[RMDB]
RNA sequence: GGGAACGACUCGAGUAGAGUCGAAAAGAUAUGGAUCAGGUAUGCAGCGAUGAAAUACAUCGGAAACGAUGUAUGGAGCUGGAUACUGAUCCUAAGUCAAACCGCAUUGUGUUCGCACAAUGCGGAACAGUUUAGUGAACUUCGGUUCACUAAACUGAAAAGAAACAACAACAACAAC
Reactivity to DMS in 0.01 (KOAc 150mM, MgCl2 10mM, bicine 150mM(pH8.5), 24C), signal-to-noise 3, nucleotides 027 to 126: g010a040u010a300u000g000g010a010u010c000a010g020g000u010a020u000g010c010a020g000c010g000a110u010g000a170a080a000u000a010c000a000u000c000g000g000a160a140a180c000g030a010u000g000u010a000u000g010g000a060g020c020u000g000g000a030u000a030c000u000g000a000u000c000c000u000a010a060g000u000c050a120a140a250c010c000g000c010a000u010u000g010u010g020u000u020c300g030c000a010c000a000a000u000g000c010g000g010a020a060
Reactivity to 2A3 in 0.01 (KOAc 150mM, MgCl2 10mM, bicine 150mM(pH8.5), 24C), signal-to-noise 3, nucleotides 027 to 126: g010a010u080a020u150g000g010a000u010c020a010g290g250u130a010u100g300c000a000g030c030g300a300u050g010a020a010a000u010a000c000a000u000c010g030g030a030a100a010c010g000a000u000g000u000a000u010g000g000a010g000c000u000g010g020a010u010a020c000u000g000a000u020c000c000u000a090a020g040u000c040a050a080a120c010c000g000c010a000u000u010g000u000g040u070u020c080g000c010a000c000a000a000u000g010c010g010g000a000a010
Structure probing data (DMS and 2A3) for a 177-nucleotide construct. It was measured as part of the RMDB library TTRDES. The RNA was probed in 150 mM KOAc, 10 mM MgCl2 and 150 mM bicine (pH 8.5) at 24 C.